RNA sequence: GGGAACGACUCGAGUAGAGUCGAAAAAGUGGUGCAAUCUCAGCUUACUGCAGCUUCCGCCUCCCGGAUUCGAGCAGUUCUCUGCCUCAGCCUCCAGAGUAGCUGGGAUUACAGGCACCCGCACCACGGUAGCAGAGAUAUUCGUAUCUCUGCUACCAAAAGAAACAACAACAACAAC
Reactivity to DMS in 0.01 (KOAc 150mM, MgCl2 10mM, bicine 150mM(pH8.5), 24C), signal-to-noise 3, nucleotides 027 to 126: a120g000u010g010g010u020g020c010a030a020u000c020u000c000a010g020c010u020u010a050c010u000g000c030a090g010c040u000u000c010c020g000c110c060u030c050c100c020g020g000a060u000u010c020g000a090g030c050a020g000u010u030c030u000c010u010g000c070c060u020c050a080g020c040c020u000c060c030a020g000a040g000u000a030g010c000u000g000g000g000a010u010u000a090c140a120g020g030c110a060c010c010c020g030c040a070c000c000a020c030
Reactivity to 2A3 in 0.01 (KOAc 150mM, MgCl2 10mM, bicine 150mM(pH8.5), 24C), signal-to-noise 6, nucleotides 027 to 126: a000g070u060g000g020u010g000c010a010a010u000c000u000c000a010g000c010u060u130a020c010u020g020c000a030g000c010u030u010c010c020g030c040c020u110c030c030c000g020g000a070u050u040c030g050a060g050c010a000g010u100u030c020u010c010u030g030c010c020u080c050a040g020c010c010u050c020c010a010g010a010g050u070a010g010c000u000g000g000g010a010u020u030a050c040a020g030g090c050a060c020c000c000g010c000a020c000c000a010c020
Structure probing data (DMS and 2A3) for a 177-nucleotide construct.
For 2A3, 11,427 sequencing reads were counted.
Values are in units of 0.01, from 0 to 300, in steps of 10.
Values cover nucleotides 27 to 126.
The reactions ran in a buffer of 150 mM KOAc, 10 mM MgCl2 and 150 mM bicine (pH 8.5), at 24 C.